[RMDB]
RNA sequence: GGGAACGACUCGAGUAGAGUCGAAAAAGUUAUGAGUUCGCUCAUAACUACAGCGAAAGGCGCUCGGUCCCGCAGUCCGCCGAAGGCAUCCCAGCCUGUCCAAGUUGGUAUAUUUCGAUAUACCAAACUUUCGUAAUUAGUUCGCUAAUUACGAAAGAAAAGAAACAACAACAACAAC
Reactivity to DMS in 0.01 (KOAc 150mM, MgCl2 10mM, bicine 150mM(pH8.5), 24C), signal-to-noise 7, nucleotides 027 to 126: a020g000u000u000a010u000g000a020g020u000u010c240g020c000u000c010a000u000a000a000c000u000a070c160a080g000c040g000a050a070a110g000g000c030g010c070u000c030g010g000u000c030c020c020g010c100a080g010u000c120c030g020c020c030g010a140a040g010g010c030a080u010c030c020c020a140g000c020c010u000g010u010c100c110a070a110g010u000u010g000g010u000a000u000a010u000u000u010c160g010a020u000a010u000a020c000c010a010a030a100
Reactivity to 2A3 in 0.01 (KOAc 150mM, MgCl2 10mM, bicine 150mM(pH8.5), 24C), signal-to-noise 3, nucleotides 027 to 126: a000g000u010u000a010u010g000a000g040u020u100c170g050c060u000c000a010u000a020a010c000u020a030c030a010g050c010g120a150a060a050g060g000c020g010c060u020c040g060g040u030c010c000c010g040c010a010g040u010c030c030g000c010c030g050a020a000g010g000c010a040u040c000c010c010a000g010c010c010u030g020u020c030c030a100a040g100u030u020g010g030u000a000u010a000u010u100u070c170g040a000u000a000u000a000c000c000a010a020a050